[RMDB]
RNA sequence: GGGAACGACUCGAGUAGAGUCGAAAAGGCCGUUCCUGCUAAAAAAAUCUGGCCGAUAGUUGUGUCGGGGUCCCGCUCGUAGGAACCCGGUAACAACGAACGUGCGGCGGCCCGUUAAACGGUGCGCCGCAGGAAUAUACGAGCUACACACGUAGAUUAGAGGAAUAAAGUUCGCUUUAUUCCUCUAAAAAGAAACAACAACAACAAC
Reactivity to 2A3 in 0.01 (KOAc 150mM, MgCl2 10mM, bicine 150mM(pH8.5), 24C), signal-to-noise 2, nucleotides 027 to 156: g000g010c010c000g040u040u050c010c010u030g120c070u220a090a080a030a040a000a040a080u110c110u090g000g000c000c000g010a040u090a050g020u000u010g010u000g000u000c000g000g000g000g030u000c000c030c020g010c000u010c000g000u060a000g000g000a000a010c000c000c000g000g000u080a050a000c000a000a000c000g040a110a010c090g070u080g000c000g000g000c000g030g000c040c030c000g030u020u060a070a100a020c000g010g050u080g090c000g050c000c000g050c000a000g000g010a010a000u040a000u000a050c020g000a000g000c050u080a030c090a020c030a000c130g140u110a030g000a210u020

An RNA of 207 nucleotides, treated with 2A3 and read out base by base. Conditions: 150 mM KOAc, 10 mM MgCl2 and 150 mM bicine (pH 8.5), 24 C.